[RMDB]
This 177-nucleotide RNA was probed chemically with DMS and 2A3. Values cover nucleotides 27 to 126. It was measured as part of the RMDB library TTRDEL.
RNA sequence: GGGAACGACUCGAGUAGAGUCGAAAAGAUAUGGACUCUGUUGACGGCAUGUCACCGCCGAGUCGGAAACGAUAUCGGUGCAUGCCGAUGGGAGUCCUAAGUCAAAAGUCUAGGUUCGCCUAGACAACAUGAAACCUAUGUUCGCAUAGGUUUCAUGAAAAGAAACAACAACAACAAC
Reactivity to DMS in 0.01 (KOAc 150mM, MgCl2 10mM, bicine 150mM(pH8.5), 24C), signal-to-noise 8, nucleotides 027 to 126: g000a050u000a300u000g000g000a010c000u000c000u000g010u010u020g020a190c110g000g000c000a010u000g010u010c070a010c060c030g020c300c130g010a120g010u000c000g000g000a110a050a160c010g000a030u000a050u000c010g010g010u000g000c020a000u000g010c010c000g010a040u000g010g000g000a010g010u000c000c000u000a010a080g000u000c030a090a120a120a140g010u000c000u000a000g010g000u000u010c270g010c000c000u000a000g000a010c010a050a100
Reactivity to 2A3 in 0.01 (KOAc 150mM, MgCl2 10mM, bicine 150mM(pH8.5), 24C), signal-to-noise 6, nucleotides 027 to 126: g020a010u080a070u150g010g010a010c010u010c030u050g290u300u230g260a150c040g000g000c000a010u010g120u300c060a030c080c020g050c040c070g080a100g050u000c030g000g020a080a090a010c010g010a010u060a160u200c020g000g020u060g000c010a000u010g010c000c010g000a010u010g050g000g010a010g000u000c000c000u010a070a000g040u010c050a000a110a050a130g010u000c000u000a010g010g060u030u070c280g070c080c000u010a000g010a000c010a000a010